Notes
Structure probing data (2A3 and DMS) for a 207-nucleotide construct. The 2A3 profile rests on 4,838 reads. The reactions ran in a buffer of 150 mM KOAc, 10 mM MgCl2 and 150 mM bicine (pH 8.5), at 24 C. DMS adducts were read by reverse transcription with MarathonRT. Reactivities are rounded to 0.1 and cut off at 0 and 3. It was measured as part of the RMDB library OK3TST.
[RMDB]
RNA sequence: GGGAACGACUCGAGUAGAGUCGAAAAGAUGCACGGCAUUAGUGUGAUCCGAGAGGAUUACACAUUAUAUCCUAGGCUGUGCUAGACUAGGUCCAUUGUGGCUUUUGCCACUUACAGUACCUCAACUUAUCAGGCAUGGAGGUACGAACCAUGCUAAAUGCAUGACUAAUUUCGAUUAGUCAUGCAUAAAAGAAACAACAACAACAAC
Reactivity to 2A3 in 0.01 (KOAc 150mM, MgCl2 10mM, bicine 150mM(pH8.5), 24C), signal-to-noise 3, nucleotides 027 to 156: g100a010u110g000c000a000c000g020g000c040a090u060u130a170g000u000g000u000g000a000u000c000c000g040a040g000a030g080g010a010u010u010a000c000a000c000a000u050u030a070u020a030u060c050c070u060a090g080g000c010u020g000u000g000c010u020a020g010a050c050u050a010g000g020u020c030c020a050u020u090g000u010g020g000c020u090u100u140u300g010c010c000a000c000u010u090a040c030a030g010u020a000c000c020u050c030a030a080c050u140u170a110u290c050a030g050g000c000a020u030g030g010a040g070g090u050a050c010g010a010a020c000c010a020u030g000c010u110a180a160
Reactivity to DMS in 0.01 (KOAc 150mM, MgCl2 10mM, bicine 150mM(pH8.5), 24C), signal-to-noise 4, nucleotides 027 to 156: g000a140u000g010c000a030c030g020g020c000a130u000u040a120g020u000g020u020g000a010u000c020c000g020a300g020a300g040g000a020u000u000a030c010a010c010a080u000u000a110u010a130u010c090c050u000a090g010g010c000u000g010u000g020c040u000a060g020a110c040u000a070g000g000u000c110c050a230u010u000g040u000g010g000c000u000u010u010u000g040c000c000a030c020u000u000a050c170a180g020u000a010c010c000u000c030a080a140c070u000u020a120u000c180a140g040g000c050a090u010g020g000a040g000g010u010a040c020g020a050a070c030c000a080u000g020c010u010a070a110